Structure probing data (DMS and 2A3) for a 177-nucleotide construct. The RNA was probed in 150 mM KOAc, 10 mM MgCl2 and 150 mM bicine (pH 8.5) at 24 C. Reactivities are given for positions 27 through 126.

RNA sequence: GGGAACGACUCGAGUAGAGUCGAAAACGGAUCACUGAUCGAUCCGAUCACAUGAGCGAGUACACGUACCAUGAGCGAUCAGACGUCUAGAUGUGAUCAUGUAGUAGCGUACCAUGGGUACAGGUACUGCGUACGCUGCAUUCGUGCAGCGUACGCAAAAAGAAACAACAACAACAAC
Reactivity to DMS in 0.01 (KOAc 150mM, MgCl2 10mM, bicine 150mM(pH8.5), 24C), signal-to-noise 1, nucleotides 027 to 126: c020g020g000a020u000c020a120c060u030g000a060u010c040g000a020u000c000c010g000a090u000c070a140c060a060u000g000a210g000c010g000a080g010u000a050c090a120c140g010u000a000c020c000a040u000g010a110g060c050g000a040u000c000a040g000a120c060g010u010c010u000a060g000a060u010g020u030g000a080u010c000a040u000g000u060a030g010u010a090g010c040g010u000a070c060c010a050u080g000g020g070u000a040c060a170g060g020u000a000c000
Reactivity to 2A3 in 0.01 (KOAc 150mM, MgCl2 10mM, bicine 150mM(pH8.5), 24C), signal-to-noise 1, nucleotides 027 to 126: c010g060g020a000u000c010a000c050u010g030a010u040c040g020a060u000c000c000g030a140u110c020a110c050a190u150g170a070g040c070g070a020g110u100a050c210a040c100g010u000a020c000c200a060u080g040a040g010c040g000a010u040c000a000g010a000c020g070u020c040u090a100g020a280u050g070u100g210a140u260c020a040u030g040u000a010g050u000a010g000c010g000u000a020c060c000a020u040g030g000g070u040a050c040a040g000g180u020a000c020

Source: RMDB library OK2TRN, as collected in RNAgym.